[RMDB]
RNA sequence: GGGAACGACUCGAGUAGAGUCGAAAAUCGCAGCUUCGAGUCCUGUAUCAGGAGCCUUCUCAAGCUUUGCCGCGCAUGGGAUUACUGCGGAUUUCGGGGUUUUUAACCCCACCUUUUCCGGCGCCUAGUAAGAACUGGCAUUCGUGCCAGUUCUUACAAAAGAAACAACAACAACAAC
Reactivity to 2A3 in 0.01 (KOAc 150mM, MgCl2 10mM, bicine 150mM(pH8.5), 24C), signal-to-noise 3, nucleotides 027 to 126: u060c000g020c010a000g000c020u150u130c070g020a040g040u040c000c000u070g090u180a060u170c030a020g010g000a010g050c000c060u120u020c020u030c010a070a040g010c000u080u080u130g000c030c020g000c020g000c060a110u070g040g000g040a040u030u080a120c030u060g020c000g020g050a060u040u070u140c090g000g010g000g030u030u000u000u010u190a030a020c000c020c010c000a000c000c010u030u050u020u020c020c000g010g000c020g030c000c020u030a060
Reactivity to DMS in 0.01 (KOAc 150mM, MgCl2 10mM, bicine 150mM(pH8.5), 24C), signal-to-noise 1, nucleotides 027 to 126: u000c000g000c000a060g000c220u010u000c090g000a060g000u000c000c030u000g010u000a070u080c030a010g000g000a120g020c130c050u000u000c090u020c140a260a090g000c000u000u000u040g000c080c030g010c250g020c030a050u000g050g000g010a010u000u000a120c090u000g000c060g070g050a050u000u000u040c090g060g000g040g000u000u020u060u030u060a000a060c000c000c000c010a010c020c060u000u000u000u000c020c060g010g050c000g040c030c130u080a160